[RMDB]
Source information:
Source: RMDB libraries RFM100 and RFMREP, as collected in RNAgym. The record gives the reactivity of an RNA of 177 nucleotides to 2A3 and DMS. The RNA was probed in 150 mM KOAc, 10 mM MgCl2 and 150 mM bicine (pH 8.5) at 24 C. Values cover nucleotides 27 to 126.
RNA sequence: GGGAACGACUCGAGUAGAGUCGAAAAACGCUGAGCUACGGCUCAGCGAAAAAACUAGCCGGACAAACGUAAGUUGCAAGUGCCGGAAGUCAAGUCUUACACACAAGUGGCUAUUACGAUAGCCACACUCCCUCCAAUAUUUCGAUAUUGGAGGGAGAAAAGAAACAACAACAACAAC
Reactivity to 2A3 in 0.01 (KOAc 150mM, MgCl2 10mM, bicine 150mM(pH8.5), 24C), signal-to-noise 9, nucleotides 027 to 126: a000c010g000c000u010g000a000g000c010u030a070c270g100g000c000u000c000a000g010c010g000a020a000a000a000a000a000c010u010a010g060c010c000g000g010a010c030a050a130a010c070g010u010a000a010g000u000u000g000c000a010a000g000u000g000c000c000g000g040a000a000g080u120c090a030a000g020u040c000u010u020a010c080a010c020a010c020a140a120g000u000g000g000c000u010a010u030u070a050c230g090a030u010a000g000c000c000a000c000a000
Reactivity to DMS in 0.01 (KOAc 150mM, MgCl2 10mM, bicine 150mM(pH8.5), 24C), signal-to-noise 3, nucleotides 027 to 126: a100c020g000c000u000g030a010g020c000u000a110c200g040g000c000u010c000a000g020c000g010a000a020a110a090a090a010c000u000a000g000c000c000g000g020a020c020a110a050a080c230g010u010a000a020g010u000u000g000c020a020a030g000u000g020c020c010g020g000a080a020g000u000c160a060a010g010u010c000u010u000a000c020a030c160a080c280a150a120g000u000g000g010c010u010a020u000u000a100c180g010a040u010a000g000c000c000a000c000a040